[RMDB]
RNA sequence: GGGAACGACUCGAGUAGAGUCGAAAAUACUGCAGCCGGCUUCUGGACCUGGUUUUCCUGCUAGAUGGCUCCUCCAAGCUGUCUGAGGGCGAGUUCCAAGUGCUGAAGGUCUUUGUGGUGGGCAUGAGGAUGCAUAAGAUUUCGAUCUUAUGCAUCCAAAAGAAACAACAACAACAAC
Reactivity to DMS in 0.01 (KOAc 150mM, MgCl2 10mM, bicine 150mM(pH8.5), 24C), signal-to-noise 3, nucleotides 027 to 126: u000a090c060u000g010c040a180g010c090c090g010g000c050u000u000c070u000g010g000a050c050c030u000g000g010u010u000u000u000c020c030u000g000c140u020a010g010a030u010g010g000c020u000c140c060u000c210c170a080a040g020c000u000g010u000c010u000g010a210g010g010g030c130g000a040g000u000u000c010c050a030a050g000u000g010c030u000g010a100a060g010g000u000c030u000u000u020g020u000g000g030u000g000g010g010c090a060u000g010a240
Reactivity to 2A3 in 0.01 (KOAc 150mM, MgCl2 10mM, bicine 150mM(pH8.5), 24C), signal-to-noise 1, nucleotides 027 to 126: u070a030c030u020g020c010a010g010c010c030g160g070c050u140u060c040u130g060g050a080c010c020u050g020g010u010u000u070u080c000c010u000g060c010u010a000g000a060u030g010g000c010u000c000c000u000c020c020a040a000g000c000u020g010u000c010u020g020a080g020g000g000c050g050a050g030u110u070c010c000a080a000g040u070g040c020u010g030a060a040g030g020u010c000u110u090u080g090u010g030g000u040g020g070g050c000a020u040g070a030